[RMDB]
RNA sequence: GGGAACGACUCGAGUAGAGUCGAAAAUGGUACGCCGUGAUGACUCAGCUGGGAUUCAUCGCAAUCCUGGUCGGGCUGGUGGUGUUGGCGGCGGCCGGGGGUUCCGACCGGUUCGCCGGCCUCGGGGCUUGCCCUCCCGUUUCGACGGGAGGGCAAGAAAAGAAACAACAACAACAAC
Reactivity to 2A3 in 0.01 (KOAc 150mM, MgCl2 10mM, bicine 150mM(pH8.5), 24C), signal-to-noise 1, nucleotides 027 to 126: u090g090g010u110a060c000g030c000c000g000u100g140a180u130g000a090c000u010c000a020g020c040u050g040g000g000a000u010u050c050a120u060c300g030c160a000a010u000c030c000u040g070g000u010c030g000g000g000c000u070g150g040u090g010g050u030g030u040u100g090g030c000g000g000c000g000g000c000c000g040g000g000g010g070u000u090c000c020g010a030c000c030g060g000u230u300c160g040c000c030g060g000c000c000u010c060g010g000g050g000
Structure probing data (2A3) for a 177-nucleotide construct. It was measured as part of the RMDB library OK1LIB. The reactions ran in a buffer of 150 mM KOAc, 10 mM MgCl2 and 150 mM bicine (pH 8.5), at 24 C.